[RMDB]
RNA sequence: GGGAACGACUCGAGUAGAGUCGAAAAUCGUCACCUACGGCGGCGAGCUCUACCACAGUGGAGUCGCUGAGUAAUGCUUCCACGCGUUCUGCUCCGAUGUGGCGGGUACGGAUAACUGCGCGUUCAGCCCGGGCAAUAUGUUCGCAUAUUGCCCGGGAAAAGAAACAACAACAACAAC
Reactivity to 2A3 in 0.01 (KOAc 150mM, MgCl2 10mM, bicine 150mM(pH8.5), 24C), signal-to-noise 1, nucleotides 027 to 126: u050c040g000u030c040a020c030c020u100a130c060g050g030c010g010g050c030g000a030g190c000u000c000u030a080c040c080a090c060a080g050u050g040g000a010g020u020c020g010c080u000g000a020g050u100a000a130u090g020c000u200u060c050c050a040c120g010c010g000u030u000c050u100g030c020u050c020c000g030a040u040g000u060g020g000c070g020g000g040u040a030c060g030g010a000u050a150a110c030u030g000c080g010c040g050u000u070c040a060g000
Reactivity to DMS in 0.01 (KOAc 150mM, MgCl2 10mM, bicine 150mM(pH8.5), 24C), signal-to-noise 2, nucleotides 027 to 126: u000c020g010u000c020a070c040c170u000a100c090g030g040c050g020g000c010g020a100g020c000u000c000u000a040c000c280a100c140a300g020u000g010g000a070g020u010c010g000c050u000g000a050g010u040a050a080u010g010c050u000u010c170c170a070c180g000c000g020u000u000c020u000g000c090u000c000c040g000a080u010g030u020g000g010c100g010g000g000u000a040c090g020g000a110u000a070a080c060u000g010c020g020c060g000u010u000c130a170g000